[RMDB]
RNA sequence: GGGAACGACUCGAGUAGAGUCGAAAAUAAUCAGUUGCUCUCUUGAGGGGGGCCAAAAUGGUUGAACUGGAUGCAAAGUUGCAGUGCAACUCCAAGAACGUGGGAUUGUAAGAGUGGCCAGAUUGACGGUGGUAUCAGACUUCGGUCUGAUACCACCAAAAGAAACAACAACAACAAC
Reactivity to DMS in 0.01 (KOAc 150mM, MgCl2 10mM, bicine 150mM(pH8.5), 24C), signal-to-noise 1, nucleotides 027 to 126: u020a060a140u010c100a160g020u000u000g000c000u000c000u010c010u000u000g000a250g000g040g020g000g030g030c070c110a070a030a070a070u020g000g020u000u030g000a060a120c070u020g000g000a150u000g000c110a090a060a170g020u000u000g000c020a010g000u010g020c000a030a030c050u010c070c080a070a160g040a040a090c150g030u040g030g000g020a030u000u020g010u020a090a000g000a010g020u010g010g000c010c060a000g000a170u000u000g040a150c110